RNA sequence: GGGAACGACUCGAGUAGAGUCGAAAAGAUAUGGAGUGCCACGCUUAGAGAUCGACGAUCAGUGCGUAACAUCGUUCGGAAACGAACGUGGCACUGGGAGAUCGAUUGAGCGUGGCACUCCUAAGUCCUAUUGUUCAGUGUUCGCACUGAACAAUAGAAAAGAAACAACAACAACAAC
Reactivity to DMS in 0.01 (KOAc 150mM, MgCl2 10mM, bicine 150mM(pH8.5), 24C), signal-to-noise 5, nucleotides 027 to 126: g010a090u010a250u010g000g000a020g020u010g010c000c000a000c000g010c000u000u000a130g010a280g000a020u000c000g020a050c090g020a300u010c010a020g010u010g010c000g020u010a080a120c200a010u020c000g010u010u010c000g010g000a120a100a250c000g010a010a010c020g020u010g010g010c000a000c000u000g000g000g010a300g000a090u000c000g010a140u010u010g010a010g000c010g020u000g010g010c000a000c000u010c000c010u000a010a070g000u000c030